[RMDB]
RNA sequence: GGGAACGACUCGAGUAGAGUCGAAAAGGUCUACCCAGGGUGGCAAUGAGGGAAAGGCUGUGACUUGAUCAUCUCCAGGGGUUCUUCGGUGAACAGCCCAAGGUUGCUUAACAGCUGGUGUGUAUGAUAGCCUCACAUGUUUCGACAUGUGAGGCUAAAAAGAAACAACAACAACAAC
Reactivity to DMS in 0.01 (KOAc 150mM, MgCl2 10mM, bicine 150mM(pH8.5), 24C), signal-to-noise 1, nucleotides 027 to 126: g000g000u020c080u010a160c020c020c030a160g020g020g010u000g000g030c090a040a030u000g000a160g000g020g030a060a000a090g010g000c010u000g020u000g000a120c100u000u000g010a060u020c050a060u010c070u010c030c140a140g010g010g030g000u000u000c000u020u010c190g040g000u000g020a030a070c090a070g000c030c000c040a060a090g000g010u000u000g010c050u010u000a060a060c210a070g020c020u010g030g020u000g010u010g030u010a060u020g000a300